An RNA of 177 nucleotides, treated with DMS and 2A3 and read out base by base. For DMS, 1,957 sequencing reads were counted. 2A3 adducts were read by reverse transcription with SuperScript II with manganese. The 2A3 profile rests on 4,111 reads. It was measured as part of the RMDB library TTRDES. The RNA was probed in 150 mM KOAc, 10 mM MgCl2 and 150 mM bicine (pH 8.5) at 24 C.
RNA sequence: GGGAACGACUCGAGUAGAGUCGAAAAGAUAUGGAACGAAUCCUGAACUACAAGAGGUAUGUCGGAAACGACAUACGCUUGCAGGAGUUCGUUCCUAAGUCAAAACGCAGAGGUUCGCCUCUGCGAAGAUGAAAAGUAGCUUCGGCUACUUUUCAUCAAAAGAAACAACAACAACAAC
Reactivity to DMS in 0.01 (KOAc 150mM, MgCl2 10mM, bicine 150mM(pH8.5), 24C), signal-to-noise 2, nucleotides 027 to 126: g000a060u000a300u000g000g010a020a020c000g010a010a080u000c010c020u010g000a100a060c150u030a300c020a010a030g010a090g010g030u000a000u000g000u000c000g000g000a080a050a230c000g000a030c010a010u000a000c000g000c000u000u010g000c020a020g020g010a060g020u010u000c020g020u000u000c000c000u010a010a100g030u010c040a040a050a140a190c000g000c010a010g020a010g020g040u000u020c300g000c020c010u000c000u000g000c010g010a000a040
Reactivity to 2A3 in 0.01 (KOAc 150mM, MgCl2 10mM, bicine 150mM(pH8.5), 24C), signal-to-noise 2, nucleotides 027 to 126: g040a020u090a020u130g000g000a000a010c000g010a020a020u050c000c000u030g030a110a110c140u270a070c300a070a010g000a010g260g030u010a010u010g010u020c000g010g000a070a030a080c010g010a000c010a010u000a000c000g000c000u010u040g000c000a010g040g010a030g270u030u020c000g000u000u000c000c000u000a020a010g040u020c040a030a000a110a130c000g000c000a000g000a030g000g040u130u090c260g130c090c030u000c010u000g010c000g000a000a020